[RMDB]
RNA sequence: GGGAACGACUCGAGUAGAGUCGAAAAGAGUCACGCCCGAAAUCUGGAAGAUCACAAGGCAGCAGUUUCAUUCGUUAUGGACUCCAGGCAACAGUUUAUUGUGGAUUCUGGACCUCAGAUGGGCGCGGUAAUCGCGUCGCUUCGGCGACGCGAUUACAAAAGAAACAACAACAACAAC
Reactivity to 2A3 in 0.01 (KOAc 150mM, MgCl2 10mM, bicine 150mM(pH8.5), 24C), signal-to-noise 2, nucleotides 027 to 126: g090a040g030u040c050a000c060g120c010c000c010g010a070a070a000u000c000u010g090g020a090a000g030a160u070c020a000c000a070a000g000g000c000a000g050c020a040g000u000u190u220c040a050u070u090c090g190u200u300a070u080g050g000a060c020u050c010c040a110g090g020c050a090a090c000a070g000u010u090u050a130u060u050g000u020g020g020a010u040u030c000u000g000g040a050c070c000u140c020a040g040a120u080g000g000g000c000g060c060g050
Reactivity to DMS in 0.01 (KOAc 150mM, MgCl2 10mM, bicine 150mM(pH8.5), 24C), signal-to-noise 1, nucleotides 027 to 126: g000a100g000u000c000a160c180g020c000c000c000g000a080a140a050u000c050u030g060g030a040a000g020a040u000c210a020c210a090a020g000g040c260a050g000c050a220g080u000u040u000c020a110u050u030c200g070u000u000a110u000g070g000a000c060u000c090c130a050g000g000c030a080a200c180a060g000u000u040u040a080u040u000g000u000g000g010a020u000u010c030u000g000g000a020c010c040u000c050a080g000a090u000g040g000g000c000g000c100g030